[RMDB]
RNA sequence: GGGAACGACUCGAGUAGAGUCGAAAAAUACUUCUCAGGAUGGCGCGUUGCAGUCCAACAAGAUCCAGGGACUGUACAGAAUUUUCCUAUACCUCGAGUCGGGUUUGGAAUCCAAGGUUGACUCGCUAAAACUUUACGUGGUUCGCCACGUAAAGAAGAAUUUAGGAUUGUUCGCAAUCCUAAAUUCAAAAGAAACAACAACAACAAC
Reactivity to DMS in 0.01 (KOAc 150mM, MgCl2 10mM, bicine 150mM(pH8.5), 24C), signal-to-noise 1, nucleotides 027 to 156: a070u000a050c030u010u000c020u000c000a120g010g000a100u000g020g000c070g020c120g010u000u000g020c000a020g000u000c010c000a030a160c060a120a250g000a090u010c010c000a090g010g020g010a040c030u020g040u010a100c060a120g000a180a080u010u000u010u000c000c010u000a110u010a080c110c020u000c020g020a050g050u000c020g010g000g020u000u000u000g050g000a140a110u010c050c010a100a190g010g000u010u000g010a120c050u000c000g040c060u000a040a100a110a140c000u000u000u000a000c000g020u000g010g020u000u000c250g000c010c020a010c010g000u000a020a010a010g010a030a130
Reactivity to 2A3 in 0.01 (KOAc 150mM, MgCl2 10mM, bicine 150mM(pH8.5), 24C), signal-to-noise 3, nucleotides 027 to 156: a010u110a070c040u070u030c010u000c020a040g060g030a070u060g040g000c050g000c050g160u120u080g000c030a010g000u000c030c020a070a060c050a160a180g110a180u100c090c080a020g000g000g110a000c000u020g010u020a010c000a020g110a160a090u090u040u050u090c000c000u040a040u090a110c020c010u010c030g000a000g000u010c010g030g010g000u050u050u040g020g040a080a010u010c070c030a050a030g080g010u040u060g020a030c010u040c030g010c030u080a070a050a040a050c000u000u000u020a000c000g000u000g010g020u020u050c120g000c050c000a000c000g000u000a000a000a000g000a000a010